[RMDB]
Conditions: 150 mM KOAc, 10 mM MgCl2 and 150 mM bicine (pH 8.5), 24 C.
An RNA of 207 nucleotides, treated with DMS and 2A3 and read out base by base.
The data come from the RNA Mapping Database (RMDB), library OK3TST.
For DMS the reverse transcriptase was MarathonRT.

RNA sequence: GGGAACGACUCGAGUAGAGUCGAAAACGAAGCUUAUUGUCUUCAAUGUAAAAGAAAAGCUGGUCCAACAAGAUGACAACUAGAACAAAGGGCAGGGGCCAUACUGUGGCCACGACUCAAAACGACAGAAUGCCAGGCCCUGAGCUUUCGGGCUGGAAUGAUAACAUCCCUUCGGGGAUGUUAUCAUAAAAGAAACAACAACAACAAC
Reactivity to DMS in 0.01 (KOAc 150mM, MgCl2 10mM, bicine 150mM(pH8.5), 24C), signal-to-noise 1, nucleotides 027 to 156: c040g030a090a090g010c050u040u010a130u000u010g010u000c000u000u010c040a130a130u000g020u000a120a070a100a130g000a090a030a100a060g000c060u000g000g010u020c020c030a090a160c090a070a130g000a180u000g000a070c040a020a020c080u020a090g000a100a130c100a100a070a130g030g020g000c030a110g030g060g000g010c010c030a130u000a060c180u000g020u010g030g040c000c000a090c020g020a040c100u030c000a020a070a150a050c050g030a120c000a110g010a040a140u030g040c000c020a100g010g040c000c000c010u040g010a020g040c080u000u010u000c030g000g050g040c000u050g010g000a110
Reactivity to 2A3 in 0.01 (KOAc 150mM, MgCl2 10mM, bicine 150mM(pH8.5), 24C), signal-to-noise 2, nucleotides 027 to 156: c040g010a000a000g030c060u130u180a070u210u260g010u110c010u110u030c010a020a200u120g020u240a130a080a030a040g090a090a020a000a020g070c030u060g050g050u090c040c020a040a000c050a170a050g030a090u000g050a030c020a060a000c050u200a100g030a140a020c060a060a130a090g020g000g000c010a010g020g080g000g000c000c000a060u080a090c090u240g000u020g040g030c040c000a030c050g040a060c000u030c040a020a070a020a040c060g060a040c030a020g110a090a080u110g020c020c060a010g040g060c050c020c070u100g010a040g010c000u050u190u150c040g000g000g030c010u010g030g100a070